[RMDB]
Structure probing data (2A3 and DMS) for a 177-nucleotide construct.
RNA sequence: GGGAACGACUCGAGUAGAGUCGAAAAACUGGGCCGUUGCGAUGAUGUGCGACGGAGUCCGUAUCGGCCCAUGAAGUUUUUCAGACGUCCAUCGCACCGCACAGUGUGGUUACUGUGCGGCCCGAACUUCGGCUCAUAAAUUCGUUUAUGAGCCGAAAAAAGAAACAACAACAACAAC
Reactivity to 2A3 in 0.01 (KOAc 150mM, MgCl2 10mM, bicine 150mM(pH8.5), 24C), signal-to-noise 2, nucleotides 027 to 126: a000c030u020g010g000g000c000c000g000u020u000g020c020g080a100u060g050a040u120g180u100g090c040g010a000c020g040g010a000g020u020c020c000g000u010a010u040c010g010g020c010c010c000a000u100g070a030a080g050u000u000u030u000u140c050a050g040a020c020g100u020c000c000a020u000c010g010c000a020c000c010g040c000a000c000a000g000u020g000u060g160g210u140u100a020c000u000g000u010g000c000g000g000c000c000c010g020a030a010c020
Reactivity to DMS in 0.01 (KOAc 150mM, MgCl2 10mM, bicine 150mM(pH8.5), 24C), signal-to-noise 2, nucleotides 027 to 126: a130c080u000g010g030g040c000c000g000u010u010g010c000g020a080u000g030a110u000g010u020g020c050g000a000c050g040g010a100g010u010c030c010g010u000a020u040c000g010g040c020c000c030a070u000g000a130a060g000u010u000u000u020u000c040a110g030a110c180g000u000c000c020a070u010c020g010c060a300c000c000g000c010a020c000a010g020u020g010u020g010g010u020u040a000c000u000g010u000g000c000g000g000c020c120c040g020a070a110c190
The 2A3 profile rests on 1,681 reads. The data come from the RNA Mapping Database (RMDB), libraries RFM100 and RFMREP.